This 177-nucleotide RNA was probed chemically with DMS and 2A3. Source: RMDB library OK2TST, as collected in RNAgym.
RNA sequence: GGGAACGACUCGAGUAGAGUCGAAAAAAACCGGCAAUGUCGGUGGCGGCGAUAUCGACAUUUUCUAGCGUGGGUUCCAGGGCCGUGCCAGCAUUACCCGGCGCAACAUAAAUUUUAUCGGCUAAAGAACUAUGAAUUUAUUCGUAAAUUCAUAGUUAAAAGAAACAACAACAACAAC
Reactivity to DMS in 0.01 (KOAc 150mM, MgCl2 10mM, bicine 150mM(pH8.5), 24C), signal-to-noise 3, nucleotides 027 to 126: a050a080a090c060c020g020g020c150a060a020u010g020u000c030g000g000u000g010g000c030g000g000c030g020a090u010a010u000c020g000a040c030a040u010u000u010u010c090u010a080g000c080g050u000g020g010g010u000u000c050c050a080g000g000g010c020c020g010u000g010c020c020a090g000c030a060u010u010a090c090c010c020g010g010c060g010c050a070a030c110a080u010a050a070a120u000u010u000u000a090u020c050g010g020c060u010a090a070a110g000
Reactivity to 2A3 in 0.01 (KOAc 150mM, MgCl2 10mM, bicine 150mM(pH8.5), 24C), signal-to-noise 1, nucleotides 027 to 126: a000a000a000c000c010g000g020c030a020a010u030g000u020c010g090g000u010g080g030c030g040g000c030g020a060u010a030u120c010g040a010c030a030u160u110u090u070c090u040a030g030c000g050u040g010g050g030u010u030c040c010a050g020g070g000c010c000g000u000g010c030c010a010g010c000a060u000u100a050c020c000c000g000g000c020g020c010a000a040c010a040u160a110a060a020u050u110u030u030a060u130c000g030g010c030u100a300a060a030g080